[RMDB]
RNA sequence: GGGAACGACUCGAGUAGAGUCGAAAAGAAGAGCAGUCAGAUAAUCUUGUGCAGGAUGAAUGCUCGUAACUCCAUCGCACAAGUAGAUGUAGAUAACUUUAAUCUCUCAUAGCGGAGGAGCCGCAGAGCCGACUAGCUAGUUCGCUAGCUAGUCGGCAAAAGAAACAACAACAACAAC
Reactivity to 2A3 in 0.01 (KOAc 150mM, MgCl2 10mM, bicine 150mM(pH8.5), 24C), signal-to-noise 1, nucleotides 027 to 126: g040a010a000g000a000g000c000a040g000u000c130a010g040a300u070a100a070u220c000u030u030g010u080g060c030a060g010g160a040u150g050a000a150u080g000c060u030c040g000u000a040a040c000u000c000c000a000u090c090g000c010a000c000a000a000g030u080a080g090a010u140g080u160a000g010a090u070a120a050c000u120u000u000a020a220u010c010u000c000u000c120a040u000a000g030c000g000g070a020g000g010a000g180c040c000g010c040a060g000a000